[RMDB]
Conditions: 150 mM KOAc, 10 mM MgCl2 and 150 mM bicine (pH 8.5), 24 C. The record gives the reactivity of an RNA of 177 nucleotides to 2A3 and DMS.
RNA sequence: GGGAACGACUCGAGUAGAGUCGAAAAUACGUGACCUUCGGGUCACGUAACCGGCGUUCCCAAGUCAAAUAGAGAGACGCAAUCUCGACAGCGGCCUUUUCGUAUGAGUUGCUUUCGAGCAACUCAAUGCUCAUAUACCGUUCGCGGUAUAUGAGCAAAAAGAAACAACAACAACAAC
Reactivity to 2A3 in 0.01 (KOAc 150mM, MgCl2 10mM, bicine 150mM(pH8.5), 24C), signal-to-noise 1, nucleotides 027 to 126: u040a010c000g000u010g030a030c000c000u060u060c290g040g020g000u010c000a000c000g000u000a030a000c020c040g100g000c020g040u000u000c000c000c010a000a010g110u050c040a000a050a080u190a110g070a010g000a000g010a030c020g000c070a020a100u000c020u000c070g060a030c040a040g000c000g000g090c000c040u040u130u160u130c060g020u070a070u180g020a000g000u020u010g010c000u100u030u090c250g090a010g000c000a000a000c000u000c010a000a010
Reactivity to DMS in 0.01 (KOAc 150mM, MgCl2 10mM, bicine 150mM(pH8.5), 24C), signal-to-noise 2, nucleotides 027 to 126: u010a010c000g020u000g010a000c000c000u010u010c270g050g010g010u000c000a000c010g000u010a000a100c040c010g020g020c030g000u000u000c000c000c010a100a130g000u000c100a040a100a120u030a120g010a070g000a030g000a070c030g010c120a090a180u010c030u000c030g010a080c220a130g010c080g000g000c030c030u000u000u000u010c080g000u000a070u000g000a000g010u000u000g000c000u000u000u010c150g000a000g010c000a010a010c010u000c010a020a050